[RMDB]
RNA sequence: GGGAACGACUCGAGUAGAGUCGAAAAGAGAAUGGUGUUUCGACACCAUUCUCAAAAAGAUAUGGACGACUCCGAUAAGGAGCGUCUCGGAAACGAGACGACUCCUUUUGACGGAGGUCCUAAGUCAAAAAGAACCUUAUAUUCGUAUAAGGUUCAACCCCACAUUAGAGUUCGCUCUAAUGUGGGGAAAAGAAACAACAACAACAAC
Reactivity to 2A3 in 0.01 (KOAc 150mM, MgCl2 10mM, bicine 150mM(pH8.5), 24C), signal-to-noise 1, nucleotides 027 to 156: g000a000g010a000a020u010g000g030u010g040u050u170u130c170g030a000c020a000c000c000a020u000u000c000u000c000a020a000a000a000a000g060a050u090a040u080g000g000a000c040g080a130c050u000c020c000g040a040u020a060a000g000g000a000g000c000g000u000c000u000c000g010g010a070a050a060c010g000a010g000a000c030g150a210c000u010c020c070u010u030u000u060g050a050c000g000g000a000g030g000u000c000c000u020a050a040g060u040c030a060a030a000a020a030g090a000a020c000c000u020u000a030u000a000u030u040c070g000u030a000u010a020a000g020g000u000u000c000a000a000